Structure probing data (2A3 and DMS) for a 177-nucleotide construct.
RNA sequence: GGGAACGACUCGAGUAGAGUCGAAAACUUACAAUUCAACUCAGGUUAACAGUACUGAUAGGAUAAUGCAGGUAUAUUACGCAACAGUGAGUGAUGGUUGUCUUUUUGUAUCUAAUCCAAGCGUUGCGCUUCUCGGUACAUUCGUGUACCGAGAAGCAAAAGAAACAACAACAACAAC
Reactivity to 2A3 in 0.01 (KOAc 150mM, MgCl2 10mM, bicine 150mM(pH8.5), 24C), signal-to-noise 1, nucleotides 027 to 126: c020u060u120a070c050a070a270u120u090c000a070a030c030u030c060a010g060g010u120u090a070a050c050a080g020u040a040c030u000g100a080u030a100g130g000a030u090a060a080u300g120c060a000g000g000u090a060u020a040u110u180a040c010g040c020a020a060c020a020g080u050g040a040g050u110g060a060u060g080g050u070u050g030u090c000u090u190u020u080u070g000u010a030u000c090u050a030a020u000c000c030a000a040g080c000g080u050u070g030c010
Reactivity to DMS in 0.01 (KOAc 150mM, MgCl2 10mM, bicine 150mM(pH8.5), 24C), signal-to-noise 2, nucleotides 027 to 126: c060u010u010a080c120a150a060u010u010c060a020a290c140u000c000a040g000g060u000u010a000a120c130a090g030u030a040c060u000g010a060u010a120g010g000a090u000a060a060u000g000c070a060g000g010u000a040u000a090u010u000a180c160g000c090a020a060c070a100g000u000g010a150g020u000g000a120u000g000g000u010u000g000u000c040u010u020u010u000u000g030u000a050u000c040u010a040a090u000c030c030a060a170g000c090g030u020u000g000c190

The 2A3 profile rests on 660 reads. Conditions: 150 mM KOAc, 10 mM MgCl2 and 150 mM bicine (pH 8.5), 24 C. It was measured as part of the RMDB library OK2TST.